[RMDB]
RNA sequence: GGGAACGACUCGAGUAGAGUCGAAAAUUGAUUAAAAGGCUUAUAGAUUUCCUCUAAUAUUUCUCUAGCCCAUUCACUUUCUACACCUAUAACGAUUCUUGAAGCAUGUAGAGUAUCUUUUACUGCUCGCCAUCAUACCGUUCGCGGUAUGAUGGCGAAAAGAAACAACAACAACAAC
Reactivity to 2A3 in 0.01 (KOAc 150mM, MgCl2 10mM, bicine 150mM(pH8.5), 24C), signal-to-noise 1, nucleotides 027 to 126: u080u030g030a000u280u060a070a060a200a200g100g000c000u060u060a000u230a300g000a080u050u050u030c000c110u190c000u000a140a150u080a230u020u110u000c000u000c020u000a110g000c000c000c000a110u000u000c160a000c000u010u040u040c020u060a030c020a060c080c000u190a160u000a300a180c000g030a030u050u060c000u000u060g050a000a000g000c020a000u150g000u000a080g030a060g080u050a130u240c030u000u040u040u170a110c080u000g000c030u000
The record gives the reactivity of an RNA of 177 nucleotides to 2A3. The reactions ran in a buffer of 150 mM KOAc, 10 mM MgCl2 and 150 mM bicine (pH 8.5), at 24 C. Source: RMDB library OK1LIB, as collected in RNAgym.